Source information:
Structure probing data (DMS and 2A3) for a 177-nucleotide construct. The 2A3 profile rests on 2,726 reads. Values are in units of 0.01, from 0 to 300, in steps of 10. The RNA was probed in 150 mM KOAc, 10 mM MgCl2 and 150 mM bicine (pH 8.5) at 24 C. The data come from the RNA Mapping Database (RMDB), library OK1LIB. For 2A3 the reverse transcriptase was SuperScript II with manganese.
RNA sequence: GGGAACGACUCGAGUAGAGUCGAAAAACAGCCCUGCAUCUUCGGAGUCUCCUGCGGGACCGCAGAAGAGGGCAUCUCUGCAGGAAGGCAGUUCCCUUGCAGAGGCGGCGGGAGCUGCAAAGAAACGAAUAUCCUGCCCAUUCGUGGGCAGGAUAUUAAAAGAAACAACAACAACAAC
Reactivity to DMS in 0.01 (KOAc 150mM, MgCl2 10mM, bicine 150mM(pH8.5), 24C), signal-to-noise 2, nucleotides 027 to 126: a200c110a160g000c020c000c000u010g000c030a100u000c030u010u000c040g010g000a210g000u000c020u000c010c060u020g000c130g000g010g000a040c090c020g000c140a150g030a090a050g000a150g000g000g010c080a080u010c000u010c000u010g000c000a080g010g000a100a110g020g010c100a110g050u000u000c010c020c030u000u030g000c000a090g000a010g010g030c020g030g000c090g010g000g010a080g000c000u000g010c000a020a040a150g000a110a070a070c090g010
Reactivity to 2A3 in 0.01 (KOAc 150mM, MgCl2 10mM, bicine 150mM(pH8.5), 24C), signal-to-noise 4, nucleotides 027 to 126: a000c030a030g020c000c000c000u030g020c060a110u040c000u060u030c040g100g000a080g100u000c020u010c030c030u070g000c170g000g000g080a080c080c000g020c030a040g040a140a010g050a070g040g100g000c030a160u050c020u000c020u060g000c000a020g000g070a100a110g120g030c030a040g000u060u050c020c000c000u010u080g030c030a030g020a090g190g030c040g060g000c010g010g030g000a040g000c010u010g000c000a050a060a030g110a020a140a000c110g050